[RMDB]
RNA sequence: GGGAACGACUCGAGUAGAGUCGAAAAGAAAGAAAGAAAGCUGACCCUUCUGCUGACGGAUCUUGUGGAGCAGCACAGUGCAGAAGGGGAGAGAAGCUUUAAUGCCGACCGUCUGGGCAGCCUUGAAAAAACGGAUUCUUCUUCGGAAGAAUCCGAACUGAACAAUAUUGUUCGCAAUAUUGUUCAGAAAAGAAACAACAACAACAAC
Reactivity to DMS in 0.01 (KOAc 150mM, MgCl2 10mM, bicine 150mM(pH8.5), 24C), signal-to-noise 2, nucleotides 027 to 156: g000a110a080a080g010a140a050a100g010a060a030a060g020c030u010g010a120c000c000c000u000u000c010u000g000c000u010g010a130c060g010g010a050u000c040u000u010g030u010g030g000a100g030c080a080g000c030a050c040a110g030u000g030c010a040g020a030a020g020g000g000g000a050g020a130g010a140a060g030c020u000u000u010a050a090u000g020c040c010g000a060c020c020g020u010c080u010g030g010g000c020a070g000c040c050u000u000g000a000a060a070a050a110a210c010g010g000a040u000u000c010u010u000c000u000u010c300g020g030a020a010g010a000a000u010c000c000g010a010a030
Reactivity to 2A3 in 0.01 (KOAc 150mM, MgCl2 10mM, bicine 150mM(pH8.5), 24C), signal-to-noise 4, nucleotides 027 to 156: g060a010a040a020g060a040a090a020g090a030a060a000g010c040u070g100a110c000c000c000u000u000c010u010g010c030u070g030a030c050g060g010a100u140c060u130u110g030u060g030g100a140g080c060a010g020c010a050c010a020g060u040g010c000a000g000a000a000g020g000g010g000a010g000a000g010a030a000g000c000u060u030u040a080a050u080g010c000c010g030a060c010c020g030u030c030u040g010g010g000c010a030g010c020c030u040u070g090a070a060a010a020a020a020c010g000g000a000u000u000c000u000u000c000u000u030c150g060g000a000a000g000a000a000u010c000c000g000a000a000